[RMDB]
RNA sequence: GGGAACGACUCGAGUAGAGUCGAAAAGAUAUGGAUCGGUACCCAGCGUUGAAAUUUAUCGGAAACGAUAAAUGGAGCUGCGUACACGAUCCUAAGUCAAAGUAAGGGCCGUUCGCGGCCCUUACAACGCUGCCUAUUAGUUCGCUAAUAGGCAGCGAAAAGAAACAACAACAACAAC
Reactivity to DMS in 0.01 (KOAc 150mM, MgCl2 10mM, bicine 150mM(pH8.5), 24C), signal-to-noise 1, nucleotides 027 to 126: g010a040u000a300u000g010g000a020u000c040g010g000u010a000c020c070c000a010g040c000g000u010u000g000a100a120a010u000u000u000a030u000c000g020g010a120a050a300c020g000a020u010a010a000a000u000g000g010a060g020c010u000g020c300g000u000a000c010a080c000g030a020u000c000c010u000a000a120g010u000c020a070a220a230g000u000a000a000g040g040g000c000c050g000u000u000c270g040c030g000g000c000c010c000u020u000a000c000a080a180
The record gives the reactivity of an RNA of 177 nucleotides to DMS. It was measured as part of the RMDB library TTRDES. Reactivities are rounded to 0.1 and cut off at 0 and 3.